Annotation: The record gives the reactivity of an RNA of 177 nucleotides to DMS and 2A3. For DMS the reverse transcriptase was MarathonRT. Values cover nucleotides 27 to 126.

RNA sequence: GGGAACGACUCGAGUAGAGUCGAAAAGCCGAGUGCACGUGCGUGCGAGCAGUUUUCGAAAUCGCACGUUUCACGUAAAGACCCAACUCUACUCGAUGCGAGGGUCAGCAAGCAAGCAGCAAUAAAAACCAUUAACACGGUUCGCCGUGUUAAUGGUAAAAGAAACAACAACAACAAC
Reactivity to DMS in 0.01 (KOAc 150mM, MgCl2 10mM, bicine 150mM(pH8.5), 24C), signal-to-noise 2, nucleotides 027 to 126: g030c020c040g000a080g030u000g010c300a040c020g040u000g020c000g020u000g020c000g020a000g000c170a170g000u000u010u020u010c150g000a080a120a080u010c010g010c000a010c000g010u000u010u010c020a010c000g020u010a030a100a140g000a080c020c010c030a130a080c000u000c010u020a000c010u000c000g010a010u000g020c030g010a090g000g020g000u000c000a090g000c050a030a110g010c060a020a080g000c010a000g000c080a050a070u010a060a060a100a100
Reactivity to 2A3 in 0.01 (KOAc 150mM, MgCl2 10mM, bicine 150mM(pH8.5), 24C), signal-to-noise 1, nucleotides 027 to 126: g070c020c010g100a100g060u120g020c060a010c020g020u010g020c000g000u000g030c000g020a050g000c130a050g060u090u090u190u280c080g050a120a090a100u020c000g010c010a000c000g010u000u020u000c010a000c000g000u000a000a080a000g030a020c000c000c000a000a020c000u000c000u020a020c000u010c020g020a040u090g030c030g010a060g000g050g000u010c000a000g030c040a000a030g010c000a050a000g070c020a000g020c010a040a020u080a140a090a020a010
The reactions ran in a buffer of 150 mM KOAc, 10 mM MgCl2 and 150 mM bicine (pH 8.5), at 24 C.